[RMDB]
RNA sequence: GGGAACGACUCGAGUAGAGUCGAAAAGGGCAUCUUCGGAUGCCCAAAUCCUAAGUCGAUAGAUAUCCUGGUAGCUCGAUAAGUGUCGGAAACGACACUUUUGACGAGCUAUAAUCAGGAUGCUAUCGAUAUGGAAAAAUCUUAGGUUCGCCUAAGAGUCGUAUAAACAGUUCGCUGUUUAUACGACAAAAGAAACAACAACAACAAC
Reactivity to DMS in 0.01 (KOAc 150mM, MgCl2 10mM, bicine 150mM(pH8.5), 24C), signal-to-noise 1, nucleotides 027 to 156: g020g030g050c000a020u000c030u000u010c300g050g000a020u000g010c010c000c010a020a000a020u000c020c010u010a080a250g040u000c000g000a020u000a010g010a110u010a010u000c010c010u010g040g050u000a030g030c000u010c020g010a120u000a020a010g020u000g020u000c000g010g010a200a160a250c050g020a020c000a000c030u000u010u000u020g010a160c050g000a010g000c000u000a030u000a080a110u000c010a010g000g020a000u010g000c000u010a000u010c010g000a000u000a060u020g000g010a030a060a060a100a150u000c000u000u000a020g020g040u000u010c300g060c010c010u010a010a010g000a060
Reactivity to 2A3 in 0.01 (KOAc 150mM, MgCl2 10mM, bicine 150mM(pH8.5), 24C), signal-to-noise 4, nucleotides 027 to 156: g000g000g000c030a020u020c020u090u140c300g140g000a000u000g000c000c000c000a020a000a000u000c000c000u020a060a020g010u000c000g000a000u000a000g080a090u040a010u100c000c000u000g000g020u010a010g020c000u000c000g020a040u010a080a010g000u010g000u010c010g020g050a100a090a030c010g000a000c000a000c030u010u010u020u030g100a040c010g000a000g000c000u010a000u000a000a020u110c000a000g000g000a000u000g000c000u000a000u000c000g000a000u010a040u040g020g040a040a060a030a030a100u030c000u010u000a010g080g000u090u090c300g070c060c000u000a010a000g030a050
Chemical mapping of a 207-nucleotide RNA with DMS and 2A3. Source: RMDB library RNAMAK, as collected in RNAgym. 2A3 adducts were read by reverse transcription with SuperScript II with manganese. The 2A3 profile rests on 4,830 reads.